[RMDB]
Notes
This 177-nucleotide RNA was probed chemically with DMS and 2A3. The RNA was probed in 150 mM KOAc, 10 mM MgCl2 and 150 mM bicine (pH 8.5) at 24 C. Source: RMDB library OK2TRN, as collected in RNAgym. DMS adducts were read by reverse transcription with MarathonRT. Reactivities are given for positions 27 through 126. The 2A3 profile rests on 3,469 reads.
RNA sequence: GGGAACGACUCGAGUAGAGUCGAAAAUUUGCAGUUAAUCAAAUUAUGGAAGCCUGGACUGCUAACUACUGUUCAGGAGAAUGACAUAAUUGGUCAUUGAAUUGCCUCAAAAAAGAGUAGUUAAAGACUAUUUACUGCAUUUCGAUGCAGUAAAUAGAAAAGAAACAACAACAACAAC
Reactivity to DMS in 0.01 (KOAc 150mM, MgCl2 10mM, bicine 150mM(pH8.5), 24C), signal-to-noise 5, nucleotides 027 to 126: u000u000u000g030c040a060g020u000u010a060a030u010c020a110a070a040u000u000a030u000g010g020a250a140g000c000c020u000g000g000a010c000u000g010c050u000a080a090c210u000a200c010u000g000u000u000c010a010g010g020a070g000a070a080u010g000a280c000a010u000a020a040u000u000g000g010u010c130a080u000u000g000a010a030u000u000g010c030c050u020c070a000a030a070a120a090a130g010a050g010u000a060g000u010u000a070a070a140g000a190
Reactivity to 2A3 in 0.01 (KOAc 150mM, MgCl2 10mM, bicine 150mM(pH8.5), 24C), signal-to-noise 3, nucleotides 027 to 126: u090u110u140g010c000a000g030u070u130a020a040u060c050a050a100a130u040u020a010u030g040g000a010a070g020c000c000u010g000g010a010c010u020g010c040u040a070a000c010u060a010c010u040g020u010u000c010a000g000g050a020g070a070a120u020g000a010c010a000u080a040a040u100u040g050g020u080c050a030u020u090g050a050a030u030u030g000c010c010u050c030a130a170a020a000a020a000g060a040g040u090a010g010u050u120a060a020a030g030a010